[RMDB]
RNA sequence: GGGAACGACUCGAGUAGAGUCGAAAAUGUUUAGGUUUAGAAUGUAGUUUAGUGCUAGCUGAUUAGAGUGUGUUAAAGACUUGUAGAGCGCCUUAGGGAAGAGCUAAUCAGUAAUACAUUAUACAAAACUAAAAGUCAUUUUCGAAUGACUUUUAGUAAAAGAAACAACAACAACAAC
Reactivity to 2A3 in 0.01 (KOAc 150mM, MgCl2 10mM, bicine 150mM(pH8.5), 24C), signal-to-noise 6, nucleotides 027 to 126: u100g020u020u060u080a110g070g010u050u060u030a130g080a200a090u100g050u120a110g030u040u070u050a020g000u010g070c030u030a040g010c000u020g000a010u000u010a010g020a020g090u190g020u030g040u130u080a050a030a000g030a040c010u060u050g210u280a030g010a000g070c030g000c010c020u030u070a100g010g050g000a050a060g090a040g090c000u000a000a000u010c010a000g000u000a000a000u040a020c000a000u020u010a010u000a030c020a020a100a040
Reactivity to DMS in 0.01 (KOAc 150mM, MgCl2 10mM, bicine 150mM(pH8.5), 24C), signal-to-noise 6, nucleotides 027 to 126: u010g010u000u000u010a100g010g010u000u000u000a090g000a090a090u010g010u000a100g010u010u010u000a020g020u000g010c060u010a300g000c000u000g010a030u000u000a000g000a070g020u020g030u020g020u020u000a020a040a040g000a300c020u000u010g020u020a100g010a030g000c030g000c020c010u000u010a060g020g010g010a020a030g010a100g010c000u000a000a000u000c010a020g010u000a030a080u010a130c010a010u000u010a040u000a030c030a060a080a090